Source: RMDB library OK2TST, as collected in RNAgym. Chemical mapping of a 177-nucleotide RNA with DMS and 2A3. The 2A3 profile rests on 1,128 reads. Values are in units of 0.01, from 0 to 300, in steps of 10. The RNA was probed in 150 mM KOAc, 10 mM MgCl2 and 150 mM bicine (pH 8.5) at 24 C. DMS adducts were read by reverse transcription with MarathonRT.
[RMDB]
RNA sequence: GGGAACGACUCGAGUAGAGUCGAAAACUGGCUCAGCCUGGCCCAAGCCUUCUCCCACAGCGGGGUACACAGCCUGGACGGCAGGGAAAUAGACCGUCAGGCACUACGGGAACUGACACAGGUGGUGGCGUGUUAGGUUUUUCGAAACCUAACACGCAAAAGAAACAACAACAACAAC
Reactivity to DMS in 0.01 (KOAc 150mM, MgCl2 10mM, bicine 150mM(pH8.5), 24C), signal-to-noise 1, nucleotides 027 to 126: c090u020g020g000c040u000c150a170g010c010c010u010g000g000c000c050c050a120a130g000c010c060u000u000c080u000c050c000c090a050c210a110g040c070g030g020g020g020u020a110c020a120c070a110g010c000c020u000g010g000a050c040g010g000c040a120g000g000g010a100a050a070u000a080g020a180c000c010g000u000c020a050g020g000c070a050c020u010a050c050g000g010g010a040a100c100u000g000a100c090a100c060a050g000g040u000g000g050u000g000
Reactivity to 2A3 in 0.01 (KOAc 150mM, MgCl2 10mM, bicine 150mM(pH8.5), 24C), signal-to-noise 1, nucleotides 027 to 126: c000u030g040g060c010u030c160a000g000c010c020u010g090g080c010c000c000a000a020g020c000c010u120u010c070u000c000c030c010a090c020a020g070c030g030g010g040g010u040a040c030a000c000a020g000c000c000u120g050g120a050c010g020g020c010a050g140g080g090a080a060a050u170a040g160a150c000c010g020u030c000a010g000g100c020a010c030u060a040c020g050g000g030a090a030c020u050g020a020c030a000c000a080g070g000u040g020g090u040g060